[RMDB]
RNA sequence: GGGAACGACUCGAGUAGAGUCGAAAAUCCACUAUGAAUCUAGUCACUAAAUAAACACAAUUAGCUACUGUGUGUAAUAGUGAGUGUUGAUAACACAAAAUAAUAGUAUAGUUAUGGAAGAUUAUACGCGCCCUUGCUCCGUUCGCGGAGCAAGGAAGAUGCUAUUAAACUUCGGUUUAAUAGCAUCAAAAGAAACAACAACAACAAC
Reactivity to DMS in 0.01 (KOAc 150mM, MgCl2 10mM, bicine 150mM(pH8.5), 24C), signal-to-noise 2, nucleotides 027 to 156: u000c000c010a190c110u010a120u000g010a150a070u000c050u010a150g040u010c000a050c010u000a010a010a140u000a120a160a020c010a000c000a010a050u000u000a230g010c210u000a070c050u000g020u010g020u000g000u000a100a300u000a010g010u000g020a080g010u000g030u000u010g010a140u010a060a220c020a070c010a060a040a040a090u020a120a300u000a070g000u000a030u000a050g010u000u000a170u010g000g000a160a240g000a040u000u000a030u000a040c030g000c090g030c070c030c000u010u000g020c000u000c000c010g000u010u000c230g010c050g000g020a040g000c000a000a000g000g000a010a010
Reactivity to 2A3 in 0.01 (KOAc 150mM, MgCl2 10mM, bicine 150mM(pH8.5), 24C), signal-to-noise 5, nucleotides 027 to 156: u020c040c010a050c070u200a230u230g110a090a040u040c090u100a040g100u020c010a000c010u020a000a020a070u050a040a050a010c010a010c000a020a080u130u090a070g050c050u160a060c040u010g010u000g010u000g010u010a010a030u000a030g000u010g020a040g040u030g020u030u020g100a150u220a300a020c020a010c030a020a100a050a060u240a100a060u050a090g000u020a020u010a040g010u020u060a060u160g090g050a100a050g010a080u020u040a010u030a060c050g020c010g040c030c010c000u000u000g010c000u000c000c010g030u060u040c140g000c020g080g000a010g000c000a000a000g000g000a000a000